[RMDB]
This 207-nucleotide RNA was probed chemically with 2A3 and DMS.
Conditions: 150 mM KOAc, 10 mM MgCl2 and 150 mM bicine (pH 8.5), 24 C.
It was measured as part of the RMDB library RSTRND.
For 2A3 the reverse transcriptase was SuperScript II with manganese.

RNA sequence: GGGAACGACUCGAGUAGAGUCGAAAACAUACAGAACAGGAUCGUCGCGUAGCACGUUGUGGGCGAAGUGACUAAAACUUACACAACUCAUCCAAAGCACCCUGCCCGUCGGGCGGCUGCGGAUUAAAUCAGUAGACACGGCUAAGCAUGUAGUACCGAUACAAAGAUGCUUCGGCAUCUUUGUAUCAAAAGAAACAACAACAACAAC
Reactivity to 2A3 in 0.01 (KOAc 150mM, MgCl2 10mM, bicine 150mM(pH8.5), 24C), signal-to-noise 3, nucleotides 027 to 156: c020a000u240a030c080a030g160a160a030c040a060g080g070a140u080c070g030u010c010g000c020g060u120a010g010c010a000c040g040u040u020g000u010g000g000g010c020g050a060a020g010u020g030a000c020u040a000a010a010a050c060u130u210a050c030a010c010a020a050c010u030c100a040u000c010c010a070a000a000g000c000a000c000c000c030u020g010c000c010c010g050u030c010g000g030g000c040g050g000c000u000g010c010g000g010a000u000u020a000a010a030u110c040a000g030u020a010g030a010c030a030c090g000g000c020u040a090a020g040c040a070u140g040u110a060g090u060a150c060c100
Reactivity to DMS in 0.01 (KOAc 150mM, MgCl2 10mM, bicine 150mM(pH8.5), 24C), signal-to-noise 2, nucleotides 027 to 156: c020a240u000a150c040a110g030a100a160c090a060g010g030a030u000c090g000u000c030g020c090g010u010a060g000c030a090c190g010u000u010g030u000g010g000g000c000g000a080a250g010u000g010a130c100u000a050a070a080a040c100u000u010a080c090a070c010a040a100c080u010c070a160u000c020c020a070a300a040g010c010a030c020c000c000u000g020c000c010c050g000u000c040g050g000g030c040g010g030c030u000g000c300g000g020a060u000u000a070a090a200u000c040a060g100u000a100g020a080c010a070c100g010g000c060u000a050a100g000c010a140u000g030u000a030g010u010a090c030c100